Source information: An RNA of 177 nucleotides, treated with 2A3 and DMS and read out base by base. For DMS, 6,563 sequencing reads were counted. Reactivities are given for positions 27 through 126. The RNA was probed in 150 mM KOAc, 10 mM MgCl2 and 150 mM bicine (pH 8.5) at 24 C. For 2A3, 2,723 sequencing reads were counted.
RNA sequence: GGGAACGACUCGAGUAGAGUCGAAAAAACAGAGCGGAUGAUAUAAGAGGCUUUGAGAGCUUGGAAUAAUAGUCUUUAGAACUUUUGAGACCAGAGAUGAGGGUUCGUAUUCGUGAAUAGAUGGGAACCUCUAUUCUACAUUCGUGUAGAAUAGAGGAAAAGAAACAACAACAACAAC
Reactivity to 2A3 in 0.01 (KOAc 150mM, MgCl2 10mM, bicine 150mM(pH8.5), 24C), signal-to-noise 3, nucleotides 027 to 126: a000a000c060a010g060a010g010c040g030g020a030u020g030a000u040a000u040a300a040g020a030g000g000c000u070u080u090g140a110g020a030g020c020u050u050g040g050a040a000u100a130a030u040a060g020u000c010u060u090u070a090g040a110a070c010u070u030u140u200g060a050g020a040c010c010a020g030a020g010a130u130g030a100g030g000g010u010u030c020g010u040a090u050u040c010g010u020g070a100a060u050a140g050a070u090g010g010g070a010a010
Reactivity to DMS in 0.01 (KOAc 150mM, MgCl2 10mM, bicine 150mM(pH8.5), 24C), signal-to-noise 6, nucleotides 027 to 126: a090a060c080a070g010a080g020c060g000g000a090u010g000a130u010a100u000a090a100g010a130g010g000c050u000u000u010g000a090g000a060g000c030u000u000g000g010a140a070u010a070a060u010a070g010u000c020u000u010u010a090g010a100a070c060u000u000u010u010g010a070g000a060c030c040a070g000a110g010a060u000g000a090g000g000g020u000u000c060g020u000a080u000u000c040g030u010g010a070a080u010a070g000a070u000g010g010g000a100a180